[RMDB]
RNA sequence: GGGAACGACUCGAGUAGAGUCGAAAAGGUAGUAGGAGCUUUGGGUUGAACAUAAGUUUUCAGCAGGAGUGCGUGGAGUGAAAAGAGAGAUGGGGUUGGAUUUUUGGUCAACUCCAACUUUAAGAGAUUCAGAGGAUGUGAUUCCUGAAAAAAGAGGCUACCAGAGUGUUUUCGAACACUCUGGUAGAAAAGAAACAACAACAACAAC
Reactivity to DMS in 0.01 (KOAc 150mM, MgCl2 10mM, bicine 150mM(pH8.5), 24C), signal-to-noise 1, nucleotides 027 to 156: g020g030u000a040g010u010a070g010g010a010g020c010u000u000u010g030g000g030u010u010g000a060a120c090a140u000a080a100g030u010u000u000u000c010a140g030c070a100g020g020a080g000u010g030c070g030u010g050g070a110g010u010g000a080a080a070a120g030a190g010a030g000a120u010g040g000g020g030u000u000g050g000a160u000u010u010u010u030g040g000u000c020a020a060c050u010c000c020a030a070c030u010u000u010a110a100g010a120g000a180u000u000c070a030g040a090g000g010a040u000g010u000g000a200u000u000c030c030u120g000a000a020a020a040a090a130g000a180g020g000
Reactivity to 2A3 in 0.01 (KOAc 150mM, MgCl2 10mM, bicine 150mM(pH8.5), 24C), signal-to-noise 2, nucleotides 027 to 156: g050g020u080a060g010u060a010g020g040a040g020c060u050u050u080g050g000g000u010u090g000a070a000c020a030u180a070a190g030u030u050u070u200c050a030g000c040a060g010g050a060g000u070g040c020g010u020g010g030a000g020u080g040a020a080a060a000g040a020g000a000g010a030u030g000g000g000g030u000u000g040g040a090u080u130u040u130u300g100g040u040c040a000a000c010u000c010c000a030a020c020u040u080u060a060a020g030a000g020a080u050u010c030a010g000a030g110g010a040u020g030u030g080a070u080u100c000c000u060g070a050a050a030a000a030a030g160a030g100g000

Conditions: 150 mM KOAc, 10 mM MgCl2 and 150 mM bicine (pH 8.5), 24 C. An RNA of 207 nucleotides, treated with DMS and 2A3 and read out base by base. Source: RMDB library OK3TST, as collected in RNAgym. For 2A3, 898 sequencing reads were counted. For 2A3 the reverse transcriptase was SuperScript II with manganese.